[RMDB]
RNA sequence: GGGAACGACUCGAGUAGAGUCGAAAACAACACGUCUUCGGACGUGUUGAAACGUGGUGCGUACGAAAACGCAUAUAAAGCCCAAGACAAGCAGGGCAAAAAAAACAACCAGCUUCGGCUGGUUGAAGAGUUACAAUAACUUCGGUUAUUGUAACUCAAAAGAAACAACAACAACAAC
Reactivity to DMS in 0.01 (KOAc 150mM, MgCl2 10mM, bicine 150mM(pH8.5), 24C), signal-to-noise 3, nucleotides 027 to 126: c020a010a010c000a000c000g010u000c000u000u020c190g020g010a010c000g010u000g020u000u000g000a050a070a160c040g000u010g020g010u000g000c000g030u000a050c030g000a090a060a040a090c020g010c000a010u000a110u000a060a090a130g000c000c000c000a110a100g010a300c160a050a090g020c170a120g000g010g000c020a000a000a000a040a030a030a030a090c010a000a000c000c000a000g000c000u000u010c170g010g010c000u000g000g010u000u000g010a020a080
Reactivity to 2A3 in 0.01 (KOAc 150mM, MgCl2 10mM, bicine 150mM(pH8.5), 24C), signal-to-noise 2, nucleotides 027 to 126: c010a000a000c010a000c000g000u000c000u030u030c200g100g000a000c000g000u010g000u000u010g000a010a000a000c030g010u070g080g010u010g070c000g000u010a010c020g080a030a040a020a000c000g010c020a000u020a000u010a040a060a010g000c010c010c000a070a030g170a100c080a080a020g090c080a110g020g000g000c000a050a020a000a010a000a000a010a010c010a000a000c010c000a000g010c010u020u030c050g150g000c000u010g000g000u000u000g010a000a000

Chemical mapping of a 177-nucleotide RNA with DMS and 2A3. The DMS profile rests on 5,056 reads. For 2A3 the reverse transcriptase was SuperScript II with manganese. The RNA was probed in 150 mM KOAc, 10 mM MgCl2 and 150 mM bicine (pH 8.5) at 24 C. For DMS the reverse transcriptase was MarathonRT. It was measured as part of the RMDB library M2PK50.